[RMDB]
RNA sequence: GGGAACGACUCGAGUAGAGUCGAAAAUCUUGAGAGUUCGCUCUCAAGAAAAAAGCGUACUACUUCUUCUCGACGAUCCUCCCCACCCGUUCCCAAAUAGGAACGGAGGGGGAGAGAGGGAAGUAUCGCAAAAAAGCACUGAGUUCGCUCAGUGCAACAAAUAACGCUACUUCGGUAGCGUUAUUUGAAAAGAAACAACAACAACAAC
Reactivity to 2A3 in 0.01 (KOAc 150mM, MgCl2 10mM, bicine 150mM(pH8.5), 24C), signal-to-noise 2, nucleotides 027 to 156: u010c000u000u000g000a000g000a000g010u110u120c220g040c040u010c000u010c020a010a000g000a080a040a000a010a000a000g050c060g080u140a140c050u000a010c010u000u000c000u270u180c010u050c040g280a290c080g040a110u060c020c010u030c000c000c000c010a010c020c000c000g000u000u000c020c010c010a110a240a080u150a030g000g010a000a000c030g000g020a050g010g010g000g000g000a000g000a000g000a000g000g030g010a000a000g000u000a010u110c050g000c000a060a200a000a000a030a070g010c020a000c000u000g000a000g000u070u130c280g140c150u000c000a000g010u010g010c000a010a000
Reactivity to DMS in 0.01 (KOAc 150mM, MgCl2 10mM, bicine 150mM(pH8.5), 24C), signal-to-noise 2, nucleotides 027 to 156: u000c000u020u020g010a090g020a020g020u000u010c300g000c030u000c000u000c000a010a030g020a000a060a070a140a080a210g000c020g000u010a080c180u020a010c040u000u000c010u000u010c030u000c010g030a220c170g010a160u000c130c010u000c010c000c000c010a030c010c000c000g010u000u000c010c000c010a050a100a240u000a040g000g010a050a010c000g020g000a020g010g020g000g010g000a000g000a040g020a100g000g010g000a020a000g010u000a020u010c020g000c030a000a040a050a180a110a170g010c000a020c010u010g000a040g000u000u040c300g060c000u000c000a020g030u020g000c000a000a050
Chemical mapping of a 207-nucleotide RNA with 2A3 and DMS. 2A3 adducts were read by reverse transcription with SuperScript II with manganese. For DMS, 3,462 sequencing reads were counted. For DMS the reverse transcriptase was MarathonRT. The data come from the RNA Mapping Database (RMDB), library RNAMAK. The RNA was probed in 150 mM KOAc, 10 mM MgCl2 and 150 mM bicine (pH 8.5) at 24 C.